[RMDB]
RNA sequence: GGGAACGACUCGAGUAGAGUCGAAAAGCUAUCUUAGUGAAGUAUGGUUGCUGUGAUGUUACCUACUUUGAAAAUAAACUCUGGUUUGAUUUUGUUGAAAAUCCCAGUGUUAUUGGUGUUUAUCAUAAUGCCGAGGAGUUCGCUCCUCGGAAAAGAAACAACAACAACAAC
Reactivity to 2A3 in 0.01 (KOAc 150mM, MgCl2 10mM, bicine 150mM(pH8.5), 24C), signal-to-noise 2, nucleotides 027 to 129: g080c090u000a020u300c020u090u150a070g060u070g070a070a010g000u030a040u220g000g010u000u040g000c000u010g010u010g190a060u110g020u000u030a010c000c000u020a010c000u010u030u060g120a130a090a000a020u230a020a060a000c030u060c000u030g010g110u130u070u040g150a040u000u000u000u000g260u020u130g210a000a000a020a060u000c020c000c000a080g000u090g000u010u070a080u080u050g070g000u090g000u130u030u110a180u020c050a030u060a100a030u270g030
This 170-nucleotide RNA was probed chemically with 2A3. The reactions ran in a buffer of 150 mM KOAc, 10 mM MgCl2 and 150 mM bicine (pH 8.5), at 24 C. For 2A3, 806 sequencing reads were counted. The data come from the RNA Mapping Database (RMDB), library 15KLIB.